[RMDB]
RNA sequence: GGGAACGACUCGAGUAGAGUCGAAAAUUGCCAUUCUGGAUCAUUUACUCAGUGAAGAGAUGACCAAGAAAAGUCAUUUUGACACAAUUGGCUCUUCUGUUACUGGUUAUUCUUUCUCUCUUGCAGGCUAAAACACGACCUUCGGGUCGUGUUUUAGAAAAGAAACAACAACAACAAC
Reactivity to DMS in 0.01 (KOAc 150mM, MgCl2 10mM, bicine 150mM(pH8.5), 24C), signal-to-noise 2, nucleotides 027 to 126: u020u010g000c060c010a030u010u010c050u010g010g010a140u020c140a140u030u010u010a110c030u000c000a080g010u000g060a050a260g000a050g000a020u000g010a010c000c020a110a130g000a110a190a060a130g030u020c000a120u030u010u010u020g000a220c100a120c130a110a170u000u000g000g000c000u010c030u010u000c060u050g020u060u020a000c160u000g010g000u000u040a040u000u010c050u000u000u000c020u010c020u000c000u010u010g030c080a050g000g000
Reactivity to 2A3 in 0.01 (KOAc 150mM, MgCl2 10mM, bicine 150mM(pH8.5), 24C), signal-to-noise 3, nucleotides 027 to 126: u070u130g110c020c000a030u170u010c060u070g080g020a050u020c030a050u070u130u100a110c060u050c050a030g030u010g110a060a010g010a010g010a050u030g080a110c000c040a030a050g070a010a110a000a000g010u010c000a030u000u080u120u300g110a030c020a010c030a110a060u030u040g050g010c000u000c000u120u010c000u000g130u030u030a050c050u020g000g100u020u050a090u070u030c030u010u030u000c040u000c010u000c020u040u080g000c090a050g110g000